[RMDB]
RNA sequence: GGGAACGACUCGAGUAGAGUCGAAAACCGUAGGUGUGAGACAUAGCAAUGUCGAAGAACAAUAAUUCGAAAGAGUUAUUGGGAGACAUUGAACUACUAUGUAUCACACCUAAACGGAAAACCAGUGCUUUGACUGUUCGCAGUCAAAGCACUGGAAGCAAUGCAUAUCCUUCGGGAUAUGCAUUGCAAAAGAAACAACAACAACAAC
Reactivity to 2A3 in 0.01 (KOAc 150mM, MgCl2 10mM, bicine 150mM(pH8.5), 24C), signal-to-noise 1, nucleotides 027 to 156: c000c000g000u010a020g010g000u000g000u000g000a010g000a000c000a010u000a000g020c000a000a000u010g000u010c030g050a300a010g000a010a000c000a000a010u010a000a000u020u000c010g040a070a050a060g000a060g000u010u000a000u000u000g030g010g000a010g010a010c010a000u000u010g020a030a000c000u180a030c000u000a020u000g000u000a000u020c000a000c000a000c000c000u000a000a000a000c000g040g000a060a020a000a160c010c000a000g000u000g040c010u030u000u000g000a000c010u030g060u090u190c300g000c180a000g020u010c040a010a000a000g000c000a000c000u000g000g010a000a000